[RMDB]
RNA sequence: GGGAACGACUCGAGUAGAGUCGAAAACGCGUCAGUGCGUGCGGGUCUGGCCCAGGCCGACCGCGAGCACGCCGACUACGCCGUCCUGCAUGUGAUCGACACGCCCGAUGUCAAUGCCAAGGUGGUGGCGUUGCAGGGGAUUCGUCCCCUGCAACGCAAAAGAAACAACAACAACAAC
Reactivity to DMS in 0.01 (KOAc 150mM, MgCl2 10mM, bicine 150mM(pH8.5), 24C), signal-to-noise 1, nucleotides 027 to 126: c160g000c080g020u010c180a060g110u020g000c000g000u010g000c080g000g000g020u000c030u020g030g000c020c040c190a230g020g100c010c000g050a010c010c000g000c080g080a130g040c000a040c000g000c000c050g020a160c090u030a110c070g030c000c090g030u030c000c000u000g030c040a070u000g010u000g000a120u040c010g010a040c080a030c040g000c020c000c030g040a080u000g000u000c070a140a090u000g000c000c000a130a080g010g000u000g000g000u000g080
Reactivity to 2A3 in 0.01 (KOAc 150mM, MgCl2 10mM, bicine 150mM(pH8.5), 24C), signal-to-noise 1, nucleotides 027 to 126: c160g030c010g040u040c060a040g000u020g150c000g000u020g000c020g030g000g000u010c130u300g040g000c030c010c110a220g200g000c010c000g040a050c000c000g180c070g130a040g000c000a000c000g030c000c000g000a000c010u020a020c030g060c020c000g000u040c000c000u020g010c000a010u070g020u060g020a090u020c020g030a000c090a000c070g030c030c030c010g010a020u100g040u080c080a160a000u050g020c000c010a050a010g040g030u000g000g120u040g080
Conditions: 150 mM KOAc, 10 mM MgCl2 and 150 mM bicine (pH 8.5), 24 C. Structure probing data (DMS and 2A3) for a 177-nucleotide construct. The DMS profile rests on 1,565 reads. DMS adducts were read by reverse transcription with MarathonRT.